Background:
This 207-nucleotide RNA was probed chemically with DMS and 2A3. It was measured as part of the RMDB library PDB130. DMS adducts were read by reverse transcription with MarathonRT. For 2A3 the reverse transcriptase was SuperScript II with manganese. The 2A3 profile rests on 2,494 reads. Reactivities are given for positions 27 through 156. The DMS profile rests on 1,769 reads.
RNA sequence: GGGAACGACUCGAGUAGAGUCGAAAAGUUUGACUGGGGCGGUCGCCUCCCAAAAUGUAACGGAGGCGCCCAAAGGUCACCUCAAGACGGUUGGAAAUCGUCUGUAGAGCGCAAAGGUAGAAGGUGGCUUGACUGCGAGACUGACACGUCGAGCAGGGGCAUGUUUAUACUUCGGUAUAAACAUGCCAAAAGAAACAACAACAACAAC
Reactivity to DMS in 0.01 (KOAc 150mM, MgCl2 10mM, bicine 150mM(pH8.5), 24C), signal-to-noise 1, nucleotides 027 to 156: g020u020u020u000g020a100c060u000g000g050g020g050c080g060g070u020c020g020c050c000u000c000c020c040a090a090a180a180u000g010u010a090a170c070g000g010a040g090g040c000g030c020c000c020a030a120a080g020g020u000c010a030c030c000u010c070a050a070g000a030c000g040g040u000u010g050g000a070a290a040u000c010g000u060c000u000g000u010a110g080a130g020c000g000c050a090a060a140g000g010u000a080g010a050a060g000g040u000g020g010c010u000u000g040a040c000u000g000c060g000a300g020a150c000u040g000a090c120a060c090g000u000c020g000a300g010c000a030g030g010
Reactivity to 2A3 in 0.01 (KOAc 150mM, MgCl2 10mM, bicine 150mM(pH8.5), 24C), signal-to-noise 3, nucleotides 027 to 156: g030u060u050u130g030a040c030u040g000g020g010g040c060g030g010u120c050g000c000c000u020c000c000c000a070a150a060a100u300g030u120a070a010c030g000g000a000g000g000c010g000c000c000c000a030a030a000g010g000u020c000a000c010c000u010c010a010a010g020a010c020g010g030u040u060g090g010a090a100a070u020c010g000u000c000u010g040u070a080g000a050g040c090g000c110a100a070a070g040g020u050a070g020a130a010g020g010u020g010g020c020u040u070g040a040c000u010g000c020g000a020g000a010c000u050g040a070c030a020c260g010u010c010g000a010g000c010a000g000g010